Source: RMDB library RFM100, as collected in RNAgym. An RNA of 177 nucleotides, treated with 2A3 and DMS and read out base by base. The reactions ran in a buffer of 150 mM KOAc, 10 mM MgCl2 and 150 mM bicine (pH 8.5), at 24 C.
[RMDB]
RNA sequence: GGGAACGACUCGAGUAGAGUCGAAAAAGCUGGUCUCAGUGACUAGGGGGGCCCGACUGUUUAAUAAAAACAUAGCUCUCUGCUAGCCCGUAAGGGUGUGUACAGAGGGCGACACCUGCCCAGUGCUACACGGAGAACAUUUCGAUGUUCUCCGUGUAAAAGAAACAACAACAACAAC
Reactivity to 2A3 in 0.01 (KOAc 150mM, MgCl2 10mM, bicine 150mM(pH8.5), 24C), signal-to-noise 3, nucleotides 027 to 126: a000g010c020u040g000g010u050c020u000c070a060g020u060g170a060c040u080a110g030g010g000g020g010g000c020c030c000g010a080c020u080g160u070u050u090a240a160u170a070a090a040a010a020c030a030u050a040g000c000u000c000u000c000u010g000c010u030a020g000c010c010c000g030u070a160a200g000g010g000u030g010u010g030u050a050c010a000g000a000g000g000g000c010g010a000c000a020c020c000u020g030c000c000c010a020g050u020g050c000u010
Reactivity to DMS in 0.01 (KOAc 150mM, MgCl2 10mM, bicine 150mM(pH8.5), 24C), signal-to-noise 2, nucleotides 027 to 126: a040g000c090u000g000g000u000c010u040c150a190g020u060g000a000c020u000a140g020g000g000g060g010g080c090c020c010g030a090c260u000g020u010u000u000a140a070u030a070a120a010a020a020c080a060u050a160g000c030u030c000u000c000u000g010c010u010a250g000c000c000c000g020u060a100a190g000g000g010u000g000u010g020u000a160c020a010g010a010g010g010g000c000g000a040c080a140c050c020u000g000c000c000c020a140g020u000g020c060u020
About this RNA
Values cover nucleotides 27 to 126. The DMS profile rests on 1,828 reads.